[RMDB]
Structure probing data (2A3 and DMS) for a 177-nucleotide construct. For 2A3 the reverse transcriptase was SuperScript II with manganese. The RNA was probed in 150 mM KOAc, 10 mM MgCl2 and 150 mM bicine (pH 8.5) at 24 C. Source: RMDB library OK2TRN, as collected in RNAgym.
RNA sequence: GGGAACGACUCGAGUAGAGUCGAAAAUCUGCACUUCACCGGGACGAAUGGAGUUGGCGAAGUGGGUCGUGGUAUAGCCCUAACGUUAUUCAAUCUUGCUGACACACUUCUCGGCGGGCUGCCGACAAUUCCUCGACUACUUCGGUAGUCGAGGAAUAAAAGAAACAACAACAACAAC
Reactivity to 2A3 in 0.01 (KOAc 150mM, MgCl2 10mM, bicine 150mM(pH8.5), 24C), signal-to-noise 1, nucleotides 027 to 126: u000c010u070g000c010a040c010u060u130c040a030c040c020g020g030g010a000c030g050a100a130u150g020g010a240g090u050u050g020g000c070g050a070a000g020u060g010g010g010u080c060g040u060g110g000u120a110u150a240g040c040c000c010u020a110a010c060g100u060u070a070u150u100c030a050a070u000c010u060u080g070c050u040g050a020c020a000c010a030c030u000u000c030u040c020g000g010c030g040g080g000c030u020g000c020c010g020a000c000a020
Reactivity to DMS in 0.01 (KOAc 150mM, MgCl2 10mM, bicine 150mM(pH8.5), 24C), signal-to-noise 1, nucleotides 027 to 126: u020c030u000g010c030a130c040u010u010c040a070c000c030g010g020g020a090c200g020a050a150u000g020g010a110g020u020u000g010g020c050g010a040a040g000u000g020g000g030u000c070g020u010g010g000u010a040u010a140g000c070c030c030u000a070a030c120g000u020u010a040u010u000c040a080a090u000c090u000u020g000c000u010g020a050c020a110c020a020c060u000u000c000u000c020g030g040c050g000g000g000c140u020g010c000c040g000a030c160a080